[RMDB]
RNA sequence: GGGAACGACUCGAGUAGAGUCGAAAAUGCUCUCCAUGAGACAGUGGGCAUACACGGAGUUUGACGAUGACAAACUCCUCCAGUUUGUCGUCAUGGCGACUCCUGAGGAUCUCGCAGCCAACGCGGAGCGUUGGGGUCAAUUCGUUGACCCCAACGCAAAAGAAACAACAACAACAAC
Reactivity to DMS in 0.01 (KOAc 150mM, MgCl2 10mM, bicine 150mM(pH8.5), 24C), signal-to-noise 9, nucleotides 027 to 126: u010g000c090u000c020u000c020c030a080u000g010a140g010a060c090a080g010u000g010g010g010c110a080u000a150c160a130c210g000g000a020g010u000u000u000g020a300c120g000a070u000g010a060c010a000a010a010c000u000c070c070u010c090c080a090g000u000u000u000g010u000c000g010u000c010a040u000g010g010c080g000a020c020u000c010c010u000g000a090g010g010a100u000c040u010c030g010c060a090g000c040c070a070a040c150g010c070g020g010a080
Reactivity to 2A3 in 0.01 (KOAc 150mM, MgCl2 10mM, bicine 150mM(pH8.5), 24C), signal-to-noise 7, nucleotides 027 to 126: u050g000c010u000c000u000c030c010a080u130g010a020g020a060c030a040g030u060g010g010g000c030a050u090a090c080a030c130g020g010a020g000u020u050u100g080a040c070g030a070u080g010a010c010a000a010a010c020u060c040c020u020c030c010a030g010u000u030u030g010u010c020g040u010c020a040u070g070g030c020g010a010c010u000c000c000u030g050a090g040g050a050u030c030u030c050g000c030a040g090c030c020a060a030c080g030c060g090g050a080

An RNA of 177 nucleotides, treated with DMS and 2A3 and read out base by base. DMS adducts were read by reverse transcription with MarathonRT. For 2A3 the reverse transcriptase was SuperScript II with manganese. The RNA was probed in 150 mM KOAc, 10 mM MgCl2 and 150 mM bicine (pH 8.5) at 24 C.